[RMDB]
RNA sequence: GGGAACGACUCGAGUAGAGUCGAAAAGCGAUCCGGUGCUGUGCACAUUGGGGCGUCUGCCUUCUGUUCCCCUGCGUUCAGCUCGCCCCUAUCUUUCCUGGAUUCCUUGUGACGUGUGAGACAGCAAGGCUGGGUAGUCGUUCGCGACUACCCAGCCAAAAGAAACAACAACAACAAC
Reactivity to 2A3 in 0.01 (KOAc 150mM, MgCl2 10mM, bicine 150mM(pH8.5), 24C), signal-to-noise 1, nucleotides 027 to 126: g070c070g040a010u060c000c000g110g030u040g030c020u030g050u120g000c000a000c060a050u050u180g020g000g000g010c000g030u030c000u020g010c000c030u170u110c080u070g010u000u030c000c000c000c000u060g030c020g120u040u090c000a000g010c000u030c030g000c000c000c000c000u070a010u050c020u010u110u020c000c060u100g040g060a110u080u060c010c050u070u080g110u120g010a030c060g000u020g020u000g000a060g000a040c010a020g000c010a050a150